[RMDB]
RNA sequence: GGGAACGACUCGAGUAGAGUCGAAAACGUCGCGUCUAUUGAUUAGGUAGCAUCAUGAGUGAGGCAGAGGAGAAAUAUUUUUAGAUUCGUCUAAUUUUAUUUUACUGAAGCCCCGCGAAUGGUGCUAAGGAUAAUGAUCUUUCGAGAUCAUUAUCCUAAAAGAAACAACAACAACAAC
Reactivity to DMS in 0.01 (KOAc 150mM, MgCl2 10mM, bicine 150mM(pH8.5), 24C), signal-to-noise 6, nucleotides 027 to 126: c040g000u000c080g000c120g010u020c050u020a080u010u010g000a120u020u000a070g010g020u000a010g000c000a010u010c010a000u000g000a300g020u000g000a090g010g000c000a020g000a300g030g020a300g000a010a000a010u000a010u000u000u010u010u000a000g000a040u000u040c170g020u000c000u010a010a000u000u000u000u000a000u010u020u010u000a190c000u010g010a300a280g000c000c000c030c000g030c000g000a160a010u000g000g020u000g030c000u010a010
Reactivity to 2A3 in 0.01 (KOAc 150mM, MgCl2 10mM, bicine 150mM(pH8.5), 24C), signal-to-noise 7, nucleotides 027 to 126: c030g060u080c050g020c040g100u030c090u090a170u080u190g130a130u150u150a050g060g080u030a000g010c000a000u010c000a000u000g010a000g020u010g000a020g000g000c010a000g010a020g040g010a100g050a060a010a000u000a000u000u020u000u000u000a000g000a010u020u030c130g020u000c070u000a010a000u000u000u010u000a010u000u000u000u020a070c010u010g000a010a000g000c000c000c000c000g000c000g010a020a010u000g000g000u000g000c000u000a000